[RMDB]
RNA sequence: GGGAACGACUCGAGUAGAGUCGAAAAGGUUUCCGUAUAUACCAUUCACUUGCGGAUGAUAGGGGCAGUGAAAAGCUGCUAACCCCUAGUGAGCUCUCCCUACUCCUUUGUACAUAGAGCUCGCAACACCAUCAAAUUGCCGGGACAUCCUGUUCACGCUAGGUUACGAGUUCGCUCGUAACCUAGCAAAAGAAACAACAACAACAAC
Reactivity to 2A3 in 0.01 (KOAc 150mM, MgCl2 10mM, bicine 150mM(pH8.5), 24C), signal-to-noise 1, nucleotides 027 to 156: g040g000u010u080u030c020c020g010u010a190u000a020u000a060c050c080a080u070u230c080a130c120u070u060g010c010g020g000a000u060g060a090u120a190g000g000g000g010c000a000g000u000g070a020a240a150a020g000c040u040g000c110u030a060a110c000c000c000c000u000a050g040u010g040a000g000c020u000c000u060c010c030c000u000a030c020u080c070c130u170u100u220g060u010a000c000a050u190a070g000a000g010c010u010c000g000c020a010a010c020a100c090c000a020u030c000a000a080a080u130u050g050c090c010g000g000g060a020c000a020u000c000c030u080g040u130u190c120a080c070